[RMDB]
RNA sequence: GGGAACGACUCGAGUAGAGUCGAAAAGAUUUACGGCGGGAAAGGUCUCGGGCGCGCCGAGGUACCGGGUGCGGCACCGACCGAAAGGCGCGGAAAUGCGGCACCGACCGAAACCGCCGGAAAGAAACGUAAUGCUACUGUUCGCAGUAGCAUUACGAAAAGAAACAACAACAACAAC
Reactivity to 2A3 in 0.01 (KOAc 150mM, MgCl2 10mM, bicine 150mM(pH8.5), 24C), signal-to-noise 1, nucleotides 027 to 126: g030a000u040u060u120a010c000g000g000c020g000g010g090a050a090a050g000g030u020c040u000c010g040g040g030c220g020c030g030c040c020g000a020g020g000u040a070c010c060g060g000g000u050g040c090g050g010c000a020c030c000g040a030c000c010g050a080a010a020g120g000c230g000c010g160g030a060a140a060u110g020c020g040g020c040a000c000c010g010a030c010c010g000a050a000a010c000c000g000c000c010g000g000a000a000a000g030a030a040a000
Reactivity to DMS in 0.01 (KOAc 150mM, MgCl2 10mM, bicine 150mM(pH8.5), 24C), signal-to-noise 2, nucleotides 027 to 126: g000a160u000u000u000a100c020g000g000c010g000g020g010a080a140a290g010g000u010c030u000c060g000g010g000c190g020c180g030c040c000g010a030g000g000u010a060c070c030g000g010g050u000g010c000g020g010c010a060c010c020g010a140c000c020g000a050a050a160g000g000c080g010c000g000g000a050a070a100u000g000c020g010g000c020a050c030c050g010a060c040c070g000a040a100a160c010c000g010c000c000g000g000a050a030a060g000a100a090a110